[RMDB]
Chemical mapping of a 177-nucleotide RNA with 2A3 and DMS. Values cover nucleotides 27 to 126. The reactions ran in a buffer of 150 mM KOAc, 10 mM MgCl2 and 150 mM bicine (pH 8.5), at 24 C.

RNA sequence: GGGAACGACUCGAGUAGAGUCGAAAAACGAUUUUGCUUUCUUACGUUAUUUACAUCGGAGAGUAUGUAUUUGUGUAGUUAUGUACUUAGAUAUGUAACUUAAUUUAAUGAUAUGGUGGGGGGCUAAGCUCCUACCAUAGUUCGCUAUGGUAGGAGCAAAAGAAACAACAACAACAAC
Reactivity to 2A3 in 0.01 (KOAc 150mM, MgCl2 10mM, bicine 150mM(pH8.5), 24C), signal-to-noise 4, nucleotides 027 to 126: a000c010g030a040u080u030u050u230g020c000u000u070u070c030u030u030a040c040g060u020u040a120u120u150u050a050c030a030u020c010g080g060a030g000a000g150u120a070u090g040u040a120u040u190u140g170u050g080u090a000g020u040u020a020u000g050u000a000c040u150u120a070g070a290u030a100u040g010u000a000a000c000u000u050a070a050u050u040u090a140a110u190g140a090u030a050u220g050g030u030g000g000g000g000g000g040c000u000a090a000
Reactivity to DMS in 0.01 (KOAc 150mM, MgCl2 10mM, bicine 150mM(pH8.5), 24C), signal-to-noise 2, nucleotides 027 to 126: a100c050g000a110u010u020u030u010g010c040u000u010u000c000u010u020a110c180g000u000u020a070u000u010u020a020c040a050u010c160g000g010a130g000a080g010u000a030u000g010u010a020u000u010u000g010u010g030u020a020g000u020u000a010u000g010u000a010c020u040u020a100g020a140u020a010u000g000u010a000a020c040u000u020a030a050u000u010u030a030a080u040g020a080u010a030u020g000g020u000g000g000g030g000g000g000c120u010a040a140